Chemical mapping of a 177-nucleotide RNA with 2A3 and DMS. The reactions ran in a buffer of 150 mM KOAc, 10 mM MgCl2 and 150 mM bicine (pH 8.5), at 24 C. 2A3 adducts were read by reverse transcription with SuperScript II with manganese.

[RMDB]
RNA sequence: GGGAACGACUCGAGUAGAGUCGAAAAUUAACGUUUGACAAUGAAACUGUAAAAUUAGGUGAAACGUUGUCUAAAGAUUUAUAUGGUAAGGAAAUCAAUGCCAGUGUAUCUCGUUUUGAAGGUUAUCAACAAGAAUCGGGUUCGCCCGAUUCUUGUUAAAAGAAACAACAACAACAAC
Reactivity to 2A3 in 0.01 (KOAc 150mM, MgCl2 10mM, bicine 150mM(pH8.5), 24C), signal-to-noise 1, nucleotides 027 to 126: u200u000a150a000c020g070u000u000u220g000a000c000a070a070u090g200a020a000a200c020u110g150u300a110a060a200a300u300u200a000g070g000u040g140a030a030a030c000g000u000u000g000u000c000u000a000a150a000g000a000u000u140u280a020u090a000u020g010g090u020a090a070g070g000a210a110a000u220c000a000a000u220g000c000c000a110g000u000g090u040a000u090c070u000c000g020u000u070u000u300g140a090a070g070g020u040u020a040u090c000
Reactivity to DMS in 0.01 (KOAc 150mM, MgCl2 10mM, bicine 150mM(pH8.5), 24C), signal-to-noise 1, nucleotides 027 to 126: u030u060a040a050c030g010u010u030u000g000a090c010a020a000u010g020a200a300a090c070u040g010u010a060a130a180a060u000u070a070g000g020u000g030a000a080a080c020g030u000u000g020u000c020u030a070a010a030g000a030u050u010u000a050u000a120u050g000g050u010a080a130g020g000a090a010a100u050c030a040a270u020g000c000c000a040g020u000g020u000a040u000c020u000c000g100u000u000u000u000g000a030a130g000g000u000u000a040u030c160